[RMDB]
RNA sequence: GGGAACGACUCGAGUAGAGUCGAAAAAAGAAGGACGCGAGACGCGAACCUGUGAGUGGAAACCCGCUUUAUUCACUGGGGACGACAACUCUGGGGAGAGAAGGGAGGGUCGGAUGGGAAGAGUAAAAUGGUUAGGUGUUCGCACCUAACAAAAGAAACAACAACAACAAC
Reactivity to 2A3 in 0.01 (KOAc 150mM, MgCl2 10mM, bicine 150mM(pH8.5), 24C), signal-to-noise 9, nucleotides 027 to 129: a000a000g090a000a000g020g010a010c020g020c030g040a040g030a070c050g020c030g030a090a100c000c000u040g030u030g050a010g010u040g010g020a040a040a050c020c010c010g030c020u130u120u100a140u130u140c060a040c090u060g000g000g000g040a050c050g020a020c020a070a050c020u020c050u060g020g000g000g020a070g000a010g040a050a030g020g020g080a160g020g000g020u060c050g000g020a050u080g050g000g000a030a030g030a020g040u160a020a050a040a040u120g040
Reactivity to DMS in 0.01 (KOAc 150mM, MgCl2 10mM, bicine 150mM(pH8.5), 24C), signal-to-noise 8, nucleotides 027 to 129: a040a030g050a070a030g020g010a090c070g030c110g030a070g000a110c130g040c040g000a110a130c050c030u000g020u030g000a040g000u020g020g010a050a090a100c060c000c040g050c110u030u030u030a010u030u020c040a040c060u000g010g010g020g020a120c110g000a100c130a060a080c050u000c010u000g020g020g020g020a100g000a070g030a050a050g000g000g000a130g010g000g010u000c090g040g010a060u010g010g010g000a030a020g000a040g030u040a030a030a060a030u020g030